The data come from the RNA Mapping Database (RMDB), library OK2TST. An RNA of 177 nucleotides, treated with 2A3 and DMS and read out base by base. The reactions ran in a buffer of 150 mM KOAc, 10 mM MgCl2 and 150 mM bicine (pH 8.5), at 24 C.

RNA sequence: GGGAACGACUCGAGUAGAGUCGAAAAAUACGGUCAGGAAACUGGUCGGUGAGAAGGACGAUACCGAUCUCCUGCUUCUGGACCUCACCAUGCCGGGCGGUACGGGACUUUCCGGACUUGUCGCGCACGAUGAGCAUGCAUUCGUGCAUGCUCAUCGAAAAGAAACAACAACAACAAC
Reactivity to 2A3 in 0.01 (KOAc 150mM, MgCl2 10mM, bicine 150mM(pH8.5), 24C), signal-to-noise 1, nucleotides 027 to 126: a050u110a030c090g020g000u000c010a010g040g070a080a080a070c060u060g000g000u000c000g010g030u060g000a090g020a100a100g210g150a040c080g070a050u100a080c010c020g000a010u010c050u030c060c030u060g060c000u080u020c030u050g060g000a050c020c000u000c030a070c020c000a040u070g000c000c010g050g000g000c000g050g000u020a000c010g000g000g120a160c080u050u110u000c040c000g000g010a020c060u080u240g050u070c030g000c040g000c140a010
Reactivity to DMS in 0.01 (KOAc 150mM, MgCl2 10mM, bicine 150mM(pH8.5), 24C), signal-to-noise 2, nucleotides 027 to 126: a090u010a070c140g000g000u010c000a110g000g000a080a080a190c100u020g000g000u000c020g000g000u000g000a160g000a060a130g000g010a180c100g010a090u000a050c080c030g010a030u010c010u020c130c110u000g030c040u000u000c030u000g010g010a050c080c000u010c130a060c040c030a040u010g000c030c030g040g000g020c080g000g000u010a000c030g010g010g000a130c290u010u010u000c040c000g060g000a050c050u010u020g040u000c000g030c160g000c100a160
2A3 adducts were read by reverse transcription with SuperScript II with manganese. For 2A3, 1,414 sequencing reads were counted.